The record gives the reactivity of an RNA of 177 nucleotides to 2A3 and DMS. The RNA was probed in 150 mM KOAc, 10 mM MgCl2 and 150 mM bicine (pH 8.5) at 24 C. 2A3 adducts were read by reverse transcription with SuperScript II with manganese. The DMS profile rests on 2,522 reads. The data come from the RNA Mapping Database (RMDB), library OK2TST.
RNA sequence: GGGAACGACUCGAGUAGAGUCGAAAAGGACAGCUUCGUCCGGCUGCGCGACUGCGACGCCGCGAGUAUCCUCGCCCAGGGCGCGGCCCUGACCGGCUCCAGUUGCUGGAAGAACAGCCCGCAGGCAGGCCUAAUAAAUCUUCGGAUUUAUUAGGCCAAAAGAAACAACAACAACAAC
Reactivity to 2A3 in 0.01 (KOAc 150mM, MgCl2 10mM, bicine 150mM(pH8.5), 24C), signal-to-noise 2, nucleotides 027 to 126: g000g000a020c030a090g060c080u130u110c180g020u060c080c000g030g020c010u080g000c010g020c020g120a160c080u070g030c080g080a030c120g000c040c010g000c040g000a010g010u100a090u110c000c020u000c020g020c030c000c020a000g050g030g000c270g000c080g180g080c010c000c010u080g050a150c000c060g000g030c010u090c020c030a060g020u150u030g060c030u080g000g060a130a040g040a150a000c020a040g050c010c000c000g040c050a030g000g020c060a030
Reactivity to DMS in 0.01 (KOAc 150mM, MgCl2 10mM, bicine 150mM(pH8.5), 24C), signal-to-noise 3, nucleotides 027 to 126: g010g010a040c040a090g020c090u010u000c100g010u000c050c090g020g020c010u000g010c060g000c020g000a080c080u010g000c160g020a050c140g040c000c010g020c040g010a080g010u000a090u000c080c010u000c080g000c160c150c040a080g010g020g020c020g030c130g010g000c040c060c010u010g000a120c250c060g000g000c000u010c060c060a030g010u000u010g010c010u010g010g000a150a060g010a090a170c080a060g010c020c020c050g000c080a070g020g010c110a140